About this RNA:
Structure probing data (2A3) for a 207-nucleotide construct. The 2A3 profile rests on 392 reads. The RNA was probed in 150 mM KOAc, 10 mM MgCl2 and 150 mM bicine (pH 8.5) at 24 C. It was measured as part of the RMDB library OK3TST.
[RMDB]
RNA sequence: GGGAACGACUCGAGUAGAGUCGAAAAAUGAAUCCUGGCACCGCUUACGCCUGGGCGUGAUCACCGCCUCGGAAGUCCAUAACGUCAUUUCGAAGCCGAGAUCAGGAACCAAGUGGACUGACAUGAAAAUGUCUUAUUUCCACACGCUGCUCGCGGAGUCAGCAGCGCUAUUCGUAGCGCUGCUGACAAAAGAAACAACAACAACAAC
Reactivity to 2A3 in 0.01 (KOAc 150mM, MgCl2 10mM, bicine 150mM(pH8.5), 24C), signal-to-noise 1, nucleotides 027 to 156: a010u060g010a010a020u040c010c010u000g030g000c010a010c060c000g150c080u070u220a190c200g000c000c020u070g000g060g020c070g000u030g050a110u070c090a070c090c070g030c010c000u050c010g030g050a080a000g020u000c110c080a110u110a160a120c090g070u040c090a230u090u070u000c010g060a020a000g050c070c050g070a070g000a070u020c040a000g010g020a070a110c070c080a300a110g060u000g020g020a040c070u070g000a000c000a010u160g050a090a000a000a000u010g070u000c000u140u060a160u090u150u020c000c000a030c000a020c040g050c020u070g050c020u050c050g000c050g000g000a040